[RMDB]
RNA sequence: GGGAACGACUCGAGUAGAGUCGAAAAGUUCCCUCUUAGAGUGGAGGUUUAACUACGCUCGUUCCCCAUAUCGGUGUGGGCGCACCGGAUUUAUAAAUCAAAGUCCUUUAGGGAACGGAAAGGAACAAAAAUCCAUGGGAGUUCGCUCCCAUGGAAACCGAUAAUGAUGGUUCGCCAUCAUUAUCGGAAAAGAAACAACAACAACAAC
Reactivity to 2A3 in 0.01 (KOAc 150mM, MgCl2 10mM, bicine 150mM(pH8.5), 24C), signal-to-noise 1, nucleotides 027 to 156: g000u000u020c150c050c000u000c040u020u210a030g020a000g010u060g020g010a060g010g040u080u130u080a080a060c010u040a020c060g080c080u040c000g000u000u000c000c000c000c000a040u070a100u180c000g000g010u000g000u010g010g000g030c040g080c020a000c000c000g000g010a000u020u260u000a160u220a080a010a190u080c150a040a000a000g000u010c000c000u040u020u060a060g020g000g000a010a010c000g030g000a140a080a010g060g020a040a030c050a100a100a000a000a010u000c000c000a010u000g000g000g020a000g030u000u050c000g080c030u010c000c010c000a000u000g030g000a000a000a010
Reactivity to DMS in 0.01 (KOAc 150mM, MgCl2 10mM, bicine 150mM(pH8.5), 24C), signal-to-noise 1, nucleotides 027 to 156: g000u000u000c050c000c000u000c070u000u000a090g020a130g050u000g020g010a090g000g000u000u010u000a100a070c040u000a040c020g020c040u000c010g000u000u000c000c020c000c070a140u000a120u010c050g040g010u000g010u020g070g020g000c100g030c050a020c000c000g060g010a170u020u010u000a100u050a050a030a100u000c120a030a070a030g040u010c000c020u000u000u010a100g020g010g000a050a060c010g000g000a070a070a150g020g000a090a150c040a050a130a160a100a140u000c000c010a050u010g020g000g020a070g050u000u000c300g010c000u000c000c000c000a000u000g000g000a010a000a010
The record gives the reactivity of an RNA of 207 nucleotides to 2A3 and DMS. The DMS profile rests on 2,372 reads. DMS adducts were read by reverse transcription with MarathonRT. The reactions ran in a buffer of 150 mM KOAc, 10 mM MgCl2 and 150 mM bicine (pH 8.5), at 24 C. High DMS reactivity at an A or C suggests that its Watson-Crick edge is free.